[RMDB]
RNA sequence: GGGAACGACUCGAGUAGAGUCGAAAAGAUAUGGAUAAUCUUAAGCAGUGCCAGUCGGAAACGACGGUAAUUCUGCUAAGAGUUAUCCUAAGUCAAAGAGCAAGAAUACUUCGGUAUUCUUGCUCAAGAUAAGCCAACUGUUCGCAGUUGGCUUAUCAAAAGAAACAACAACAACAAC
Reactivity to DMS in 0.01 (KOAc 150mM, MgCl2 10mM, bicine 150mM(pH8.5), 24C), signal-to-noise 1, nucleotides 027 to 126: g000a040u000a300u000g000g030a030u000a020a010u000c000u000u000a060a070g050c000a010g030u010g000c010c000a110g020u000c000g010g000a090a050a220c030g000a010c030g000g020u010a070a140u010u010c000u010g030c010u000a030a000g000a020g000u000u000a010u000c000c010u000a030a110g000u000c040a080a070a130g000a010g010c000a000a000g020a010a000u000a000c010u000u020c230g040g000u010a000u000u010c010u000u000g000c000u000c000a000a030
Reactivity to 2A3 in 0.01 (KOAc 150mM, MgCl2 10mM, bicine 150mM(pH8.5), 24C), signal-to-noise 1, nucleotides 027 to 126: g040a000u130a040u120g000g000a000u000a020a010u040c000u060u040a170a040g000c000a000g000u010g040c010c110a100g030u000c010g000g000a040a070a080c040g000a020c020g000g010u080a130a190u180u050c010u020g000c010u000a010a000g020a010g050u030u030a000u000c000c000u000a070a030g010u030c060a010a000a300g000a000g000c000a000a000g000a000a000u020a020c030u120u230c300g000g000u000a000u000u000c010u000u020g000c000u000c000a010a000

Chemical mapping of a 177-nucleotide RNA with DMS and 2A3. For 2A3, 1,714 sequencing reads were counted. It was measured as part of the RMDB library TTRDEL. The DMS profile rests on 1,235 reads. Reactivities are rounded to 0.1 and cut off at 0 and 3. For DMS the reverse transcriptase was MarathonRT. Values cover nucleotides 27 to 126. Conditions: 150 mM KOAc, 10 mM MgCl2 and 150 mM bicine (pH 8.5), 24 C.